[RMDB]
RNA sequence: GGGAACGACUCGAGUAGAGUCGAAAAAGUUUCUAAAACAUUUCUGACCUGAAUGAUUGCUGAACUUCGCCCAUCGAAAAAAAUACAAAUAAUGGAAAGUGCUACCGCAAUAAAUAGGCGAACACCAGAUUGUUAACUGGUUCGCCAGUUAACAAUCAAAAGAAACAACAACAACAAC
Reactivity to DMS in 0.01 (KOAc 150mM, MgCl2 10mM, bicine 150mM(pH8.5), 24C), signal-to-noise 2, nucleotides 027 to 126: a040g000u000u000u020c050u030a080a040a090a050c030a130u010u000u000c010u000g000a090c100c060u010g010a110a040u030g000a070u000u000g000c120u030g010a160a020c050u000u000c140g000c020c000c000a030u000c120g000a000a000a000a040a110a090a120u000a110c090a150a020a030u000a090a060u010g040g020a160a110a150g000u000g010c130u000a030c100c030g000c010a030a030u000a020a140a070u030a040g000g020c000g010a060a030c210a090c030c090a100
Reactivity to 2A3 in 0.01 (KOAc 150mM, MgCl2 10mM, bicine 150mM(pH8.5), 24C), signal-to-noise 1, nucleotides 027 to 126: a000g040u050u060u000c060u000a130a120a070a070c080a140u070u110u120c040u090g150a180c010c000u000g060a050a040u070g030a120u000u070g020c040u020g020a080a000c000u100u010c070g050c050c000c020a020u020c000g090a120a030a060a190a070a060a010u300a060c050a070a150a020u160a110a020u250g020g010a200a020a000g020u050g030c000u120a080c010c030g000c000a000a000u050a090a140a050u110a110g020g030c020g000a010a000c000a000c060c000a000